[RMDB]
Structure probing data (DMS and 2A3) for a 177-nucleotide construct.
The RNA was probed in 150 mM KOAc, 10 mM MgCl2 and 150 mM bicine (pH 8.5) at 24 C.
Reactivities are given for positions 27 through 126.
For 2A3, 10,169 sequencing reads were counted.
RNA sequence: GGGAACGACUCGAGUAGAGUCGAAAAGGAACACGGCUCUGACAUCCUAGCUGCGAUGACCGGAACAGAGACAGCUCUCCCAAUUCCCUCCAUGCUCGAUGUGUACCGCCUCCACUAUGGUGAUAGCCCCAUCGUAGGUAUUCGUACCUACGAUGGGAAAAGAAACAACAACAACAAC
Reactivity to DMS in 0.01 (KOAc 150mM, MgCl2 10mM, bicine 150mM(pH8.5), 24C), signal-to-noise 3, nucleotides 027 to 126: g010g010a070a100c090a120c110g020g010c010u000c030u010g010a080c120a090u010c000c010u000a090g010c060u010g000c050g000a080u000g010a080c060c050g040g000a110a100c040a050g000a120g000a130c070a090g020c050u000c040u020c000c020c020a080a120u000u000c010c020c010u010c040c030a060u020g000c040u000c020g000a040u010g000u000g000u010a080c040c030g000c030c030u000c020c000a070c060u000a020u030g000g000u000g020a050u030a060g000c180
Reactivity to 2A3 in 0.01 (KOAc 150mM, MgCl2 10mM, bicine 150mM(pH8.5), 24C), signal-to-noise 8, nucleotides 027 to 126: g070g020a070a010c040a010c070g030g000c010u020c030u030g040a040c020a050u030c000c020u030a070g030c060u070g040c060g090a110u090g050a070c020c060g030g000a040a060c040a030g040a000g040a060c020a030g010c010u010c010u000c040c010c010a010a030u050u040c010c000c010u020c030c010a050u090g010c010u020c030g080a070u070g050u020g030u090a050c010c010g020c010c010u020c020c000a050c040u060a090u140g070g040u070g060a090u120a080g050c000